[RMDB]
RNA sequence: GGGAACGACUCGAGUAGAGUCGAAAAAAAAAGGACCUACAGCCGAGCGAGUGACUGAAAACGGCAAAGUCACGAAGCAUCGUUAUACCUAAAUGGUCGUAGCGAAAAAAGAGUUGUUCCCAGUAAAAGUAAAGGUAGGAUUCGUCCUACCUUUACUAAAAGAAACAACAACAACAAC
Reactivity to 2A3 in 0.01 (KOAc 150mM, MgCl2 10mM, bicine 150mM(pH8.5), 24C), signal-to-noise 2, nucleotides 027 to 126: a000a030a020a000a040g130g000a010c000c010u010a000c040a020g100c040c050g070a020g030c030g010a030g030u000g000a010c010u040g050a010a050a080a100c090g140g020c060a140a110a000g000u010c000a000c000g010a080a000g010c010a020u010c010g000u000u000a020u010a020c010c030u100a230a210a140u300g010g030u040c090g030u010a000g010c000g070a100a040a020a030a020a000g000a000g000u010u010g010u000u010c000c000c000a010g000u020a010a060a020
Reactivity to DMS in 0.01 (KOAc 150mM, MgCl2 10mM, bicine 150mM(pH8.5), 24C), signal-to-noise 4, nucleotides 027 to 126: a070a060a050a160a120g010g000a020c000c020u000a010c040a140g010c100c080g000a100g020c050g010a270g020u000g000a010c010u000g010a050a050a080a090c140g000g010c130a040a110a020g010u000c000a010c000g010a120a150g000c020a180u000c010g020u000u000a010u000a020c000c000u000a030a050a050u000g010g000u000c120g060u000a020g010c010g000a000a030a050a060a100a140g000a000g000u000u000g000u000u000c000c000c000a070g000u000a030a060a060
An RNA of 177 nucleotides, treated with 2A3 and DMS and read out base by base. DMS adducts were read by reverse transcription with MarathonRT. It was measured as part of the RMDB library M2PK90. 2A3 adducts were read by reverse transcription with SuperScript II with manganese.